[RMDB]
RNA sequence: GGGAACGACUCGAGUAGAGUCGAAAAGAAGGCACUUUCGAGUGCCUUCAUGGGGAGCUCAGGUCUCCCUCCCAUGCAAACUCCCUAAGGGAGGAGACCUAAUUAGGUGCACUUUCGAGUGCACCAAGCUGCAUAAACCAUUCGUGGUUUAUGCAGCAAAAGAAACAACAACAACAAC
Reactivity to DMS in 0.01 (KOAc 150mM, MgCl2 10mM, bicine 150mM(pH8.5), 24C), signal-to-noise 2, nucleotides 027 to 126: g000a030a010g000g000c010a000c000u000u020u010c150g020a020g010u000g010c010c000u010u000c000a050u000g000g000g030g000a080g010c100u000c160a020g000g000u000c000u000c070c010c020u010c000c000c010a140u030g030c240a070a060a130c210u010c010c030c020u020a110a170g000g000g010a030g000g000a030g010a010c000c000u020a170a100u010u000a060g010g000u000g020c010a010c000u000u000u000c210g010a020g020u000g020c000a000c000c000a010a040
Reactivity to 2A3 in 0.01 (KOAc 150mM, MgCl2 10mM, bicine 150mM(pH8.5), 24C), signal-to-noise 3, nucleotides 027 to 126: g000a000a000g010g000c030a010c020u040u090u180c250g120a010g000u000g000c000c010u000u010c000a010u000g010g000g000g000a040g020c030u050c220a040g080g010u000c000u030c040c000c000u010c010c010c000a010u020g000c040a020a180a180c050u070c030c000c000u130a080a150g040g010g000a010g010g020a000g000a000c000c000u020a060a110u110u180a060g000g000u000g020c000a000c000u070u050u100c260g050a000g000u010g000c000a000c000c000a000a000
Structure probing data (DMS and 2A3) for a 177-nucleotide construct.
DMS adducts were read by reverse transcription with MarathonRT.
The RNA was probed in 150 mM KOAc, 10 mM MgCl2 and 150 mM bicine (pH 8.5) at 24 C.
For 2A3, 3,975 sequencing reads were counted.
For DMS, 1,893 sequencing reads were counted.